[RMDB]
RNA sequence: GGGAACGACUCGAGUAGAGUCGAAAAGAUAUGGACGACGCGUAGCAAUGACGGUGGGCUAAUAUACAUGGGUCGGAAACGACCCAUGUAUAUAACCCACUAAGACAGCUACCAUCGUCCUAAGUCAUCAAGUAGUUUUCUUCGGAAAACUACUUGAAAAAGAAACAACAACAACAAC
Reactivity to DMS in 0.01 (KOAc 150mM, MgCl2 10mM, bicine 150mM(pH8.5), 24C), signal-to-noise 1, nucleotides 027 to 126: g000a100u010a300u010g010g010a020c000g060a000c050g000c160g000u000a000g020c010a150a170u010g040a160c300g010g000u000g020g010g010c020u000a040a100u000a000u020a010c000a020u000g020g000g050u010c000g040g010a060a070a240c000g000a010c020c000c000a000u000g000u000a000u000a000u000a110a090c000c010c000a010c000u000a020a070g000a250c270a120g000c000u000a000c010c020a030u000c020g010u010c000c000u000a030a070g010u000c030a260
Chemical mapping of a 177-nucleotide RNA with DMS. It was measured as part of the RMDB library TTRINS.